Record summary: Chemical mapping of a 177-nucleotide RNA with DMS and 2A3. It was measured as part of the RMDB library TTRDES. High 2A3 reactivity points to a flexible backbone, as in loops and unpaired stretches. DMS adducts were read by reverse transcription with MarathonRT. Conditions: 150 mM KOAc, 10 mM MgCl2 and 150 mM bicine (pH 8.5), 24 C.

RNA sequence: GGGAACGACUCGAGUAGAGUCGAAAAGAUAUGGACAGAGAACACGUAUAUCGUCUCUUCUCGGAAACGAGAAGUAGAUGAUGCGUGACUGUCCUAAGUCAAAGGUUUCAGCUUCGGCUGAAACCAACAAAGUCAGCUACUUCGGUAGCUGACUUUGAAAAGAAACAACAACAACAAC
Reactivity to DMS in 0.01 (KOAc 150mM, MgCl2 10mM, bicine 150mM(pH8.5), 24C), signal-to-noise 2, nucleotides 027 to 126: g000a090u010a300u010g000g000a010c000a010g000a170g020a160a160c000a000c000g010u000a150u020a140u010c000g000u000c000u000c000u000u000c000u000c010g020g020a070a120a120c010g000a000g010a020a010g000u040a000g010a000u000g020a000u010g000c000g000u000g010a130c010u010g000u020c000c000u030a050a110g020u000c020a110a170a120g050g000u000u000u030c020a000g000c020u000u000c210g050g020c000u010g000a000a000a000c000c000a080a060
Reactivity to 2A3 in 0.01 (KOAc 150mM, MgCl2 10mM, bicine 150mM(pH8.5), 24C), signal-to-noise 1, nucleotides 027 to 126: g040a020u090a040u130g000g020a010c000a000g190a010g110a300a070c000a010c020g080u060a250u040a050u300c020g000u000c000u000c000u000u010c000u010c000g010g060a050a030a010c010g000a000g000a000a000g020u090a000g000a010u020g010a000u040g010c000g000u000g000a010c000u000g000u020c010c000u000a060a050g060u050c050a150a050a190g020g000u000u020u020c010a020g000c010u100u180c300g200g000c000u000g000a010a000a000c000c000a000a000